This 177-nucleotide RNA was probed chemically with DMS and 2A3.
RNA sequence: GGGAACGACUCGAGUAGAGUCGAAAAAGAGAGGAUCCGACGGUGCGGGAGACAAGCAACCCGGUAUUUCGUUCGUUGCCUAAGCAGCGGGGCGGAUACGCGCAAUUCGGAACUGGCACCGCCCAGCCACCAUACUGGCGUUCGCGCCAGUAUGGUGAAAAGAAACAACAACAACAAC
Reactivity to DMS in 0.01 (KOAc 150mM, MgCl2 10mM, bicine 150mM(pH8.5), 24C), signal-to-noise 2, nucleotides 027 to 126: a030g010a120g010a120g010g010a090u000c000c010g010a080c170g000g010u000g020c050g010g010g040a180g020a070c150a080a110g010c130a090a130c040c040c000g030g000u000a030u000u000u000c030g030u000u000c040g030u000u000g010c010c110u010a070a130g000c150a070g020c000g020g010g000g020c000g000g000a040u010a050c090g000c070g000c090a030a180u020u000c130g000g000a070a060c050u010g000g010c000a120c010c040g020c020c020c050a080g000c030
Reactivity to 2A3 in 0.01 (KOAc 150mM, MgCl2 10mM, bicine 150mM(pH8.5), 24C), signal-to-noise 1, nucleotides 027 to 126: a000g140a010g010a010g070g020a060u000c020c040g020a010c060g050g030u080g000c020g000g100g000a080g010a110c170a040a090g060c030a080a070c030c040c000g010g000u070a070u030u080u180c010g000u060u000c030g000u010u170g040c000c030u120a230a020g000c030a010g020c030g000g030g050g000c000g020g020a000u040a090c100g030c020g040c100a000a030u140u150c040g090g010a030a040c040u050g050g000c000a010c060c020g000c010c000c000a010g000c020
2A3 adducts were read by reverse transcription with SuperScript II with manganese.
The RNA was probed in 150 mM KOAc, 10 mM MgCl2 and 150 mM bicine (pH 8.5) at 24 C.
Values are in units of 0.01, from 0 to 300, in steps of 10.